[RMDB]
RNA sequence: GGGAACGACUCGAGUAGAGUCGAAAAACAAAAUGUGGAGUGACGUGGGCCACUGCAAGAAGCGACCAAAACCUGGAGGAGGAUGGAACACUGGGGGGAGCCGAUACCCAGGACAGGGCAGAAAAAACAUGUUCGUUUAGUUCGCUAAACGAACAUGAAAAGAAACAACAACAACAAC
Reactivity to 2A3 in 0.01 (KOAc 150mM, MgCl2 10mM, bicine 150mM(pH8.5), 24C), signal-to-noise 1, nucleotides 027 to 126: a040c040a030a120a050a040u160g020u050g090g000a030g050u080g020a060c090g010u140g020g020g050c010c020a040c060u070g020c040a030a030g080a130a000g070c020g040a020c020c040a120a050a030a000c000c010u040g000g050a030g000g000a020g030g000a030u090g060g040a080a050c030a010c080u090g000g000g010g060g000g010a000g000c000c000g000a000u070a040c000c000c010a000g000g000a020c020a030g040g030g060c050a000g120a010a110a010a000a010a000
Reactivity to DMS in 0.01 (KOAc 150mM, MgCl2 10mM, bicine 150mM(pH8.5), 24C), signal-to-noise 2, nucleotides 027 to 126: a140c110a050a110a110a040u000g010u020g020g000a050g040u010g010a090c100g000u000g000g000g010c000c020a060c060u020g000c050a040a040g000a080a120g010c060g010a110c050c000a060a020a040a070c060c040u000g020g020a070g000g000a040g000g010a040u010g000g000a070a000c100a060c120u000g020g000g000g000g000g030a090g000c020c000g010a090u010a090c030c010c010a090g010g000a050c080a030g000g000g010c070a070g010a000a010a070a060a110a050